This 177-nucleotide RNA was probed chemically with DMS and 2A3. The 2A3 profile rests on 1,564 reads. The RNA was probed in 150 mM KOAc, 10 mM MgCl2 and 150 mM bicine (pH 8.5) at 24 C.
[RMDB]
RNA sequence: GGGAACGACUCGAGUAGAGUCGAAAAAUUGCUUUUUAAACUUCUGGUUUGCAGGACGGUGUGCGAGUUCUGCAAUCGCACUGAUUCCAUCUGUUUCGUGGUUUGUGCGGCUGCGGCUGCGGUGGUACCGCUAAUAUGCUUUCGAGCAUAUUAGCGGAAAAGAAACAACAACAACAAC
Reactivity to DMS in 0.01 (KOAc 150mM, MgCl2 10mM, bicine 150mM(pH8.5), 24C), signal-to-noise 1, nucleotides 027 to 126: a050u000u010g010c040u000u000u000u000u030a030a090a130c100u010u000c070u010g020g000u000u000u000g020c020a050g010g020a050c050g010g010u010g030u010g020c050g000a100g000u000u000c010u000g010c020a030a010u000c020g030c080a040c040u000g000a160u010u000c020c020a040u000c120u010g010u000u000u000c100g030u000g000g010u000u000u010g000u010g000c030g000g010c050u000g020c020g000g000c100u000g000c040g010g030u010g000g020u020a160
Reactivity to 2A3 in 0.01 (KOAc 150mM, MgCl2 10mM, bicine 150mM(pH8.5), 24C), signal-to-noise 2, nucleotides 027 to 126: a000u080u090g080c020u170u030u050u070u140a080a220a090c000u090u080c030u130g110g000u000u040u090g000c020a000g000g000a000c000g000g040u170g020u070g100c070g010a020g030u040u000c000u010g020c000a000a000u010c010g010c010a040c020u040g040a110u180u040c020c010a010u000c060u060g070u020u020u040c020g010u020g020g000u050u040u110g040u050g010c030g000g030c040u050g000c040g030g040c040u060g040c020g050g040u050g000g020u030a060